[RMDB]
RNA sequence: GGGAACGACUCGAGUAGAGUCGAAAAGAAACAGGAUCGACAAGGGUGUAAAGAUCGCUAUUUUACUCGGCAUGAUACCACCGUUAUCGGGUCAACAGAGUAGUUGCAAAUGACAACAAUGCUCAGGAAGGGGUAGCACCGUUCGCGGUGCUACCAACUAGCCCCGUUGAUUCGUCAACGGGGCUAGAAAAGAAACAACAACAACAAC
Reactivity to 2A3 in 0.01 (KOAc 150mM, MgCl2 10mM, bicine 150mM(pH8.5), 24C), signal-to-noise 1, nucleotides 027 to 156: g000a020a090a040c080a000g050g000a120u080c010g080a010c130a060a160g050g110g000u080g010u200a150a140a030g070a050u010c010g030c170u000a100u080u090u010u040a020c030u030c050g000g000c000a000u060g000a000u050a000c000c010a030c010c010g010u070u020a010u030c030g030g000g020u000c030a010a010c050a000g040a000g030u030a000g000u000u000g070c050a130a190a230u180g080a030c000a000a000c010a100a120u090g010c000u000c030a000g060g140a010a010g120g140g000g000u000a000g000c000a000c030c000g010u010u030c220g000c000g020g000u000g000c000u000a010c000c000a000a000
Structure probing data (2A3) for a 207-nucleotide construct.